[RMDB]
RNA sequence: GGGAACGACUCGAGUAGAGUCGAAAACAAUGAAAAGCCAUUUAUAACCAAUACUUUAAUGCCAAUCCACACUUUAAGUAACUGCCCUGCUAUGGGUGCUACUUUAACACUAAGGCCCAAAGCAUAACCUACGUACAGGUUUCGACCUGUACGUAGGAAAAGAAACAACAACAACAAC
Reactivity to DMS in 0.01 (KOAc 150mM, MgCl2 10mM, bicine 150mM(pH8.5), 24C), signal-to-noise 2, nucleotides 027 to 126: c090a100a070u030g000a100a090a110a150g020c040c030a070u000u010u000a040u010a130a110c120c040a100a100u000a050c080u000u000u000a100a050u010g000c040c020a140a130u000c000c010a030c040a070c110u000u000u000a020a020g010u000a020a020c080u020g020c000c010c010u000g000c110u010a070u020g050g010g010u000g030c000u010a020c080u000u000u000a010a060c160a030c110u040a000a080g020g010c000c010c010a070a080a090g020c200a100u020a030a160
Reactivity to 2A3 in 0.01 (KOAc 150mM, MgCl2 10mM, bicine 150mM(pH8.5), 24C), signal-to-noise 2, nucleotides 027 to 126: c010a000a180u100g080a010a090a040a000g060c010c010a040u080u120u110a220u050a080a020c020c000a030a030u110a160c050u040u190u170a060a050u100g040c010c000a010a060u000c000c000a030c000a010c070u030u030u080a050a000g030u040a040a020c030u120g030c000c020c000u030g060c020u040a050u140g000g050g000u000g020c020u000a010c000u010u040u100a180a010c050a020c100u040a060a040g030g020c010c000c000a050a020a010g010c000a050u050a130a070

About this RNA: An RNA of 177 nucleotides, treated with DMS and 2A3 and read out base by base. 2A3 adducts were read by reverse transcription with SuperScript II with manganese.